RNA sequence: GGGAACGACUCGAGUAGAGUCGAAAAGUAUCCCUAGAUGAUAAAACACCGCAUAUGGCUCGUAAGAGCGGUUAAAUUAGCAAGUAAUGCAAAUUACGCGAGGUAACGCAUGGCCUAGGCUCGUUAGAAAAGGGAGAAUCCUUCGGGAUUCUCCCAACUAUAUUAGAAAGUUCGCUUUCUAAUAUAGAAAAGAAACAACAACAACAAC
Reactivity to DMS in 0.01 (KOAc 150mM, MgCl2 10mM, bicine 150mM(pH8.5), 24C), signal-to-noise 2, nucleotides 027 to 156: g020u000a070u000c030c000c010u000a130g030a090u000g020a120u010a070a120a090a180c030a080c010c020g000c030a110u000a120u000g010g020c040u010c030g000u000a100a150g000a080g010c010g010g030u010u010a050a100a150u010u000a090g040c060a100a110g010u000a070a090u000g020c060a040a110a090u000u000a070c040g000c040g030a090g030g030u010a030a040c070g010c020a060u000g000g020c030c030u020a130g000g070c000u010c070g000u000u030a090g000a040a100a150a120g000g020g040a030g020a040a030u000c010c000u000u000c300g040g020g000a020u000u000c020u000c010c010c000a000a010
The record gives the reactivity of an RNA of 207 nucleotides to DMS. The data come from the RNA Mapping Database (RMDB), library M2RFPK. For DMS, 3,228 sequencing reads were counted. The reactions ran in a buffer of 150 mM KOAc, 10 mM MgCl2 and 150 mM bicine (pH 8.5), at 24 C.